[RMDB]
RNA sequence: GGGAACGACUCGAGUAGAGUCGAAAAAGUGAAGUGAAUUUGGAGGCUUGUGGGAUAGAAGAUUUGGAAGUUGUUCCUGAUGAUGGUGAUCUUAUGGAAUAUUUGAUUCCAUCUUGGCUUAGAAAUCGGUGUACACCAUAUUCGUAUGGUGUACACCAAAAGAAACAACAACAACAAC
Reactivity to 2A3 in 0.01 (KOAc 150mM, MgCl2 10mM, bicine 150mM(pH8.5), 24C), signal-to-noise 2, nucleotides 027 to 126: a000g090u070g030a060a010g030u050g120a070a090u070u080u080g040g010a030g010g000c000u100u020g030u070g040g050g010a010u060a090g100a130a040g020a030u050u080u220g050g020a070a060g030u020u050g040u030u010c010c000u030g000a040u060g000a000u010g000g100u130g030a020u000c010u060u080a010u020g130g120a140a040u140a100u200u050u050g090a050u000u000c000c010a030u000c010u030u050g070g000c020u050u000a050g080a060a110a060u190c080
Reactivity to DMS in 0.01 (KOAc 150mM, MgCl2 10mM, bicine 150mM(pH8.5), 24C), signal-to-noise 2, nucleotides 027 to 126: a110g010u010g010a090a050g040u010g000a110a100u000u000u010g010g010a170g010g000c110u000u000g030u000g000g010g000a050u020a090g010a070a060g000a070u010u000u000g020g010a040a070g010u010u010g020u000u000c010c000u000g010a030u010g000a050u000g000g010u000g000a030u000c020u000u000a020u000g010g020a080a020u000a100u010u000u000g010a020u000u000c000c000a000u000c050u000u000g010g010c100u000u000a110g000a060a110a080u000c160